Conditions: 150 mM KOAc, 10 mM MgCl2 and 150 mM bicine (pH 8.5), 24 C. An RNA of 207 nucleotides, treated with 2A3 and DMS and read out base by base. Values cover nucleotides 27 to 156. 2A3 adducts were read by reverse transcription with SuperScript II with manganese. The 2A3 profile rests on 2,936 reads.

[RMDB]
RNA sequence: GGGAACGACUCGAGUAGAGUCGAAAAGGGUGCCGCGUCUGACGACACUUCGAACACAUCGUCGCCAAUCGCCUCGGUUUGCUCCUCCUGAAUGGAGGACAUGGGCUCCUGCGUUCCAUCUGCUGACCUGGAUCUGGGGGGUUUGCUGAUGCGGGGCGGAAAAUCUAAGGUUCGCCUUAGAUUUUCCAAAAGAAACAACAACAACAAC
Reactivity to 2A3 in 0.01 (KOAc 150mM, MgCl2 10mM, bicine 150mM(pH8.5), 24C), signal-to-noise 4, nucleotides 027 to 156: g040g020g010u050g010c050c010g000c030g050u010c100u110g030a050c030g020a010c020a030c010u180u200c160g130a200a020c070a000c010a160u080c050g080u040c010g030c030c020a040a050u040c030g060c030c000u050c060g040g020u040u040u120g030c050u020c000c010u020c000c000u140g220a160a110u300g000g000a000g000g000a000c000a010u040g030g050g000c020u030c010c010u040g050c040g030u100u030c010c020a050u040c040u120g020c020u040g030a090c010c020u020g070g010a060u040c040u090g010g020g010g000g000g010u020u110u090g010c010u020g000a010u020g030c010g000g000g000g010c060
Reactivity to DMS in 0.01 (KOAc 150mM, MgCl2 10mM, bicine 150mM(pH8.5), 24C), signal-to-noise 1, nucleotides 027 to 156: g020g020g000u000g090c000c010g030c010g040u010c080u000g040a080c020g020a060c030a070c080u000u000c040g020a070a140c060a150c070a050u010c060g040u000c020g040c030c010a080a120u000c060g020c030c010u010c030g030g000u010u010u000g020c070u000c000c000u010c000c010u000g040a120a170u020g030g040a050g040g030a020c050a010u000g000g030g010c000u000c020c000u020g010c040g020u000u000c050c040a090u000c040u010g010c060u010g020a080c070c030u000g000g000a100u000c040u000g000g000g040g040g040g000u000u000u010g000c000u000g020a060u000g000c030g020g030g010g070c180